[RMDB]
RNA sequence: GGGAACGACUCGAGUAGAGUCGAAAAGAGGGUGUGUGGUCAGAAGUGCUUUCAUCUGGCAGGCUGGAGAUCCAAGCCCAACUUGGCCACUCACCAGAUGGUUUGUAACUUGGGCAGAUUAUCGAGCCCUAGACAAAUAUUUCGAUAUUUGUCUAGGAAAAGAAACAACAACAACAAC
Reactivity to 2A3 in 0.01 (KOAc 150mM, MgCl2 10mM, bicine 150mM(pH8.5), 24C), signal-to-noise 7, nucleotides 027 to 126: g120a030g060g050g000u010g000u000g000u000g010g010u000c010a010g030a170a040g110u050g050c010u070u120u120c060a140u060c050u050g030g020c030a050g070g010c040u050g020g010a100g010a060u070c030c020a040a010g000c020c010c010a020a060c030u040u050g000g000c000c000a010c010u020c010a010c000c010a000g020a020u020g020g050u020u060u080g060u050a120a120c060u070u090g030g080g000c020a020g010a110u050u060a060u160c040g020a020g050c010
Reactivity to DMS in 0.01 (KOAc 150mM, MgCl2 10mM, bicine 150mM(pH8.5), 24C), signal-to-noise 9, nucleotides 027 to 126: g000a160g010g010g020u000g010u000g010u000g010g010u000c010a050g010a110a230g010u010g010c020u000u000u010c110a050u000c070u000g010g010c060a100g010g010c080u010g010g000a100g000a060u010c040c050a040a050g010c040c030c060a060a140c070u010u000g010g000c010c000a020c020u000c020a030c010c010a050g010a040u000g000g000u000u000u000g010u000a060a090c140u010u000g010g010g010c010a050g000a060u000u000a060u010c030g010a150g000c120
Annotation
The record gives the reactivity of an RNA of 177 nucleotides to 2A3 and DMS. The RNA was probed in 150 mM KOAc, 10 mM MgCl2 and 150 mM bicine (pH 8.5) at 24 C. The data come from the RNA Mapping Database (RMDB), library OK2TRN. 2A3 adducts were read by reverse transcription with SuperScript II with manganese.